[RMDB]
RNA sequence: GGGAACGACUCGAGUAGAGUCGAAAAUCACGUUCCCGCUGGCGGCUGUAUUUCUGCUCUGUCAGCGUGGUUUUCUGACGACGCCGCUCACCUUCACGAAAAGGAACGGACGGGAACAGACGAUGCCGACCCUAGGCAAUUUCGAUUGCCUAGGGUCAAAAGAAACAACAACAACAAC
Reactivity to 2A3 in 0.01 (KOAc 150mM, MgCl2 10mM, bicine 150mM(pH8.5), 24C), signal-to-noise 2, nucleotides 027 to 126: u010c000a010c040g010u000u000c030c000c000g000c020u010g010g010c030g020g030c100u120g000u160a180u050u290u000c040u040g020c030u030c040u120g030u000c000a000g000c000g000u060g070g030u030u130u120u040c070u100g040a020c030g010a030c030g040c010c010g070c050u040c050a140c020c010u000u060c090a100c170g100a120a130a050a120g060g000a050a060c050g000g090a070c030g000g000g020a060a010c020a000g030a000c070g010a000u060g050c040c000
Reactivity to DMS in 0.01 (KOAc 150mM, MgCl2 10mM, bicine 150mM(pH8.5), 24C), signal-to-noise 2, nucleotides 027 to 126: u000c050a150c090g000u000u000c000c000c000g070c030u010g000g010c000g050g000c060u000g000u020a140u000u010u000c070u020g000c030u000c010u010g030u000c010a010g000c040g000u020g010g020u000u010u000u000c050u010g020a120c030g020a170c060g000c000c010g000c040u020c140a150c000c000u000u010c110a140c270g000a090a030a030a010g000g000a140a100c050g000g010a120c050g000g000g000a060a050c010a040g000a070c140g000a070u010g000c070c100
Overview
This 177-nucleotide RNA was probed chemically with 2A3 and DMS. For 2A3 the reverse transcriptase was SuperScript II with manganese. The 2A3 profile rests on 1,534 reads.